[RMDB]
RNA sequence: GGGAACGACUCGAGUAGAGUCGAAAAGAUAUGGAUGGUCAAUCGUGCCUUCCUAUGAAGGAGGCAGAAGGAUCGGAAACGAUCCUUCUGCCUCUGGAGGAAGGACCCACGCGACCAUCCUAAGUCACAAUAUUUCGUAGUUCGCUACGAAAUAUUGAAAAGAAACAACAACAACAAC
Reactivity to 2A3 in 0.01 (KOAc 150mM, MgCl2 10mM, bicine 150mM(pH8.5), 24C), signal-to-noise 3, nucleotides 027 to 126: g050a020u120a060u210g010g010a000u010g060g000u000c030a100a210u300c140g000u010g010c010c010u030u090c040c000u300a300u070g000a000a000g020g010a010g020g030c010a010g020a000a000g000g000a010u030c040g020g010a140a130a000c000g000a010u030c000c000u000u000c010u000g010c010c000u000c000u000g000g000a000g000g000a000a000g020g000a020c060c090c000a020c040g020c110g000a010c000c000a010u000c000c010u010a040a030g020u020c010a010
Reactivity to DMS in 0.01 (KOAc 150mM, MgCl2 10mM, bicine 150mM(pH8.5), 24C), signal-to-noise 5, nucleotides 027 to 126: g010a060u000a300u000g010g000a020u000g000g010u000c010a220a180u010c050g010u000g000c010c000u000u000c000c000u010a200u020g010a290a180g000g000a020g010g020c000a020g000a020a000g020g000a020u000c000g010g000a130a120a230c010g000a000u000c000c000u000u000c000u000g010c000c000u000c000u000g000g000a020g030g000a010a010g020g000a290c120c280c070a020c030g020c300g000a020c010c000a020u000c010c000u000a010a090g000u000c040a290